This 177-nucleotide RNA was probed chemically with DMS and 2A3. It was measured as part of the RMDB library OK2TST. For DMS the reverse transcriptase was MarathonRT. For DMS, 1,485 sequencing reads were counted.
RNA sequence: GGGAACGACUCGAGUAGAGUCGAAAAGAGCUUUAGCUAACUUAUUGGAUACGAGCAAAAUUAAUCCACUUUCAUUUAUGUUGCUCAAACAAACGUUUGACCAAAACGACUUGUUUAAGAAAGCUAACUCACGUUCUUGAUUCGUCAAGAACGUGAGAAAAGAAACAACAACAACAAC
Reactivity to DMS in 0.01 (KOAc 150mM, MgCl2 10mM, bicine 150mM(pH8.5), 24C), signal-to-noise 3, nucleotides 027 to 126: g020a050g040c240u000u000u000a010g020c000u000a050a270c020u000u010a030u010u000g010g010a190u000a090c200g000a030g000c010a030a040a120a090u000u000a060a060u020c070c070a090c260u000u000u000c110a060u020u000u000a020u020g000u000u000g000c000u000c010a040a020a050c010a040a020a140c010g010u000u000u000g020a220c250c260a040a000a000a030c020g000a130c100u000u000g000u010u000u000a020a040g010a050a200a090g020c010u000a000a040
Reactivity to 2A3 in 0.01 (KOAc 150mM, MgCl2 10mM, bicine 150mM(pH8.5), 24C), signal-to-noise 3, nucleotides 027 to 126: g040a010g040c040u080u060u040a000g000c010u030a040a050c010u060u000a040u100u240g130g040a030u090a180c120g000a010g050c000a010a030a050a150u080u180a060a040u100c110c010a110c130u150u260u110c040a120u050u070u160a090u080g110u040u020g000c020u020c010a040a040a020c000a000a000a020c020g000u000u010u030g200a230c080c010a030a030a010a040c020g110a140c060u040u030g060u100u080u040a030a010g030a030a020a000g030c010u020a010a010